[RMDB]
RNA sequence: GGGAACGACUCGAGUAGAGUCGAAAAGCUAGGCAUUUCGAUGCCUAGCGAGCGCAGACUCUAUGCAUCUCUGAAUCACACAACAGCCGUGUCUAUGCGUGGGAGUAUCCCUCUUCGGAGGGAUAAACCACGAUCUACAUUUCGAUGUAGAUCGUGGAAAAGAAACAACAACAACAAC
Reactivity to DMS in 0.01 (KOAc 150mM, MgCl2 10mM, bicine 150mM(pH8.5), 24C), signal-to-noise 7, nucleotides 027 to 126: g010c000u000a010g000g020c000a010u000u000u010c200g010a030u000g010c000c000u000a010g010c000g000a050g020c170g020c100a160g000a050c020u000c020u000a050u000g010c070a080u000c050u000c040u000g000a120a090u000c070a060c090a050c060a060a090c130a070g010c060c060g000u000g010u000c040u000a060u000g010c060g010u010g000g000g010a120g000u000a020u000c000c000c000u000c000u000u010c160g020g000a020g000g000g000a000u000a000a070a140
Reactivity to 2A3 in 0.01 (KOAc 150mM, MgCl2 10mM, bicine 150mM(pH8.5), 24C), signal-to-noise 7, nucleotides 027 to 126: g000c000u000a000g000g000c010a010u060u050u140c270g120a010u010g000c000c000u000a000g000c000g000a030g000c120g000c030a020g020a060c000u000c010u030a020u100g030c020a080u030c040u000c020u080g100a130a080u100c020a020c000a010c010a110a150c010a050g080c030c040g070u050g030u030c040u080a070u120g040c030g020u060g020g050g010a060g010u020a010u010c000c020c000u000c010u020u030c160g100g000a000g000g000g000a000u010a000a000a000